[RMDB]
RNA sequence: GGGAACGACUCGAGUAGAGUCGAAAAGGGUGAGACCUAGGAACCGUAGGGGUAUUCUCAAAGGAAGCUUUUGAAGUGACGCCCAUGUAAGUGGGAUAUAACAACAGAACUCGUAUGAGUAGCCUAAUAAAUCGGACCUUCUUCGGAAGGUCCGAAAGUAAAAGGUCUAGUUCGCUAGACCUUUUACAAAAGAAACAACAACAACAAC
Reactivity to DMS in 0.01 (KOAc 150mM, MgCl2 10mM, bicine 150mM(pH8.5), 24C), signal-to-noise 1, nucleotides 027 to 156: g010g040g010u000g010a110g000a090c010c020u020a120g050g010a090a040c020c050g050u000a150g010g010g030g000u000a090u000u000c000u000c020a100a100a120g020g010a090a080g030c040u000u000u000u010g010a020a300g000u010g000a240c220g000c000c000c010a020u010g010u000a060a240g030u000g010g010g010a060u000a060u000a110a080c000a020a190c020a060g000a070a030c010u000c060g010u010a130u000g000a060g020u020a060g010c040c000u020a030a060u000a040a060a080u000c000g000g010a020c000c000u010u010c000u010u010c290g090g020a040a000g010g010u000c010c000g000a010a000a040
Reactivity to 2A3 in 0.01 (KOAc 150mM, MgCl2 10mM, bicine 150mM(pH8.5), 24C), signal-to-noise 2, nucleotides 027 to 156: g020g010g010u080g030a090g010a050c020c030u060a050g030g090a050a130c060c040g020u070a060g020g000g020g030u040a130u140u090c010u030c000a040a060a020g060g010a040a020g040c050u060u040u060u050g020a040a020g000u010g010a010c060g000c000c000c000a010u060g080u160a140a070g020u020g000g000g000a010u030a000u020a100a040c040a010a000c000a010g040a060a020c020u050c060g090u200a040u090g010a010g030u030a010g040c020c010u080a110a070u080a120a100a050u040c010g000g000a000c010c010u020u010c000u000u020c070g090g000a000a000g000g000u000c000c000g000a000a000a000